This 177-nucleotide RNA was probed chemically with 2A3. The RNA was probed in 150 mM KOAc, 10 mM MgCl2 and 150 mM bicine (pH 8.5) at 24 C. 2A3 adducts were read by reverse transcription with SuperScript II with manganese. It was measured as part of the RMDB library OK1LIB.

RNA sequence: GGGAACGACUCGAGUAGAGUCGAAAAGCGCCACAGCGUGAUGCGCCCGUCGUGUACCUCGAACACGCCGCAGACCCAGAAGUGAAUUCGCAGCGGGCCGAGAAUCAAUGCAUCGGUGCGUUCGGUGCGGUCGUGACGUCUUCGGACGUCACGACCGAAAAGAAACAACAACAACAAC
Reactivity to 2A3 in 0.01 (KOAc 150mM, MgCl2 10mM, bicine 150mM(pH8.5), 24C), signal-to-noise 1, nucleotides 027 to 126: g000c000g000c000c000a110c090a040g070c000g040u040g020a150u090g000c010g000c000c000c000g060u200c000g010u000g070u070a110c000c180u200c180g060a060a060c250a000c020g010c000c050g000c000a000g020a010c000c070c000a060g060a140a160g070u100g000a040a070u090u220c090g000c000a020g000c000g000g000g000c020c000g000a080g110a050a010u040c100a060a100u270g000c010a000u000c000g000g000u140g070c000g070u130u070c030g000g000u000g000